[RMDB]
RNA sequence: GGGAACGACUCGAGUAGAGUCGAAAACAUGAAGUAGGUACCUGUCCCUCGCGCCCGGACUUUAGCUUCUGCAGGUACUCGGAGUGGAAUUUCUUCGCCAUUUAGUUAUACUAAAAUUGAAUUGUGACUAUUUAUUCUAAAUGGAGAAUUCGGUAGAACCUCAAUACCGGUUCGCCGGUAUUGAGGUAAAAGAAACAACAACAACAAC
Reactivity to 2A3 in 0.01 (KOAc 150mM, MgCl2 10mM, bicine 150mM(pH8.5), 24C), signal-to-noise 1, nucleotides 027 to 156: c050a050u120g000a130a000g060u190a030g120g020u010a010c000c010u010g030u040c000c040c040u060c030g000c000g020c000c010c000g020g070a070c000u280u260u150a040g020c010u010u060c040u180g000c000a000g030g000u010a000c050u100c040g000g020a010g090u150g090g040a050a070u000u090u040c000u050u080c030g040c000c000a010u010u020u000a010g020u120u000a100u040a290c080u170a020a090a200a230u040u090g040a030a100u090u220g060u040g010a000c020u040a110u180u280u090a000u070u020c000u010a020a010a000u010g020g000a120g020a010a050u170u110c020g010g020u020a030g020a070